[RMDB]
RNA sequence: GGGAACGACUCGAGUAGAGUCGAAAACUGCUCAAAAAGAGACUCAGGGUCCCUCAGGAACAACUCGACACGAAUCCCUGGCUAUUGAACUGUGCCAACGGCACCGUGGACCUGCGCACCGGAACGCUCAAAGCGCAUCGCCCCGAGGAUUACAUUAUAACGAAGGUAGUUUCGACUACCUUCGUUAAAAAGAAACAACAACAACAAC
Reactivity to 2A3 in 0.01 (KOAc 150mM, MgCl2 10mM, bicine 150mM(pH8.5), 24C), signal-to-noise 2, nucleotides 027 to 156: c000u040g010c030u040c070a100a140a070a120a040g100a030g020a030c050u110c110a040g060g000g000u020c010c040c000u000c040a020g040g060a030a060c050a050a070c060u030c030g120a030c070a020c160g040a050a000u010c000c010c000u020g010g020c020u070a080u010u100g050a030a020c070u020g010u020g030c000c020a200a090c110g010g010c040a060c090c010g000u070g020g040a050c000c000u010g020c020g000c010a020c060c000g070g070a100a020c030g030c030u080c050a070a100a000g010c030g000c010a030u090c060g050c010c010c010c010g040a040g000g010a010u060u010a040c050a110u140u160a080
Reactivity to DMS in 0.01 (KOAc 150mM, MgCl2 10mM, bicine 150mM(pH8.5), 24C), signal-to-noise 2, nucleotides 027 to 156: c050u020g030c010u020c030a080a100a090a190a140g010a130g000a090c010u000c050a220g070g040g000u000c020c010c050u000c030a190g000g000a130a050c050a120a120c010u000c030g030a090c030a020c070g000a210a110u000c020c010c000u020g050g000c040u010a140u000u010g040a140a070c070u020g000u000g020c030c050a000a050c100g030g030c020a050c050c000g040u000g000g020a080c010c060u010g000c060g000c090a120c060c100g000g000a080a050c060g000c020u000c020a130a130a120g000c000g000c010a030u000c050g030c000c050c000c020g000a080g020g010a150u000u010a040c050a090u000u010a110
Chemical mapping of a 207-nucleotide RNA with 2A3 and DMS.
For DMS, 2,261 sequencing reads were counted.
Values cover nucleotides 27 to 156.
The data come from the RNA Mapping Database (RMDB), library OK3TST.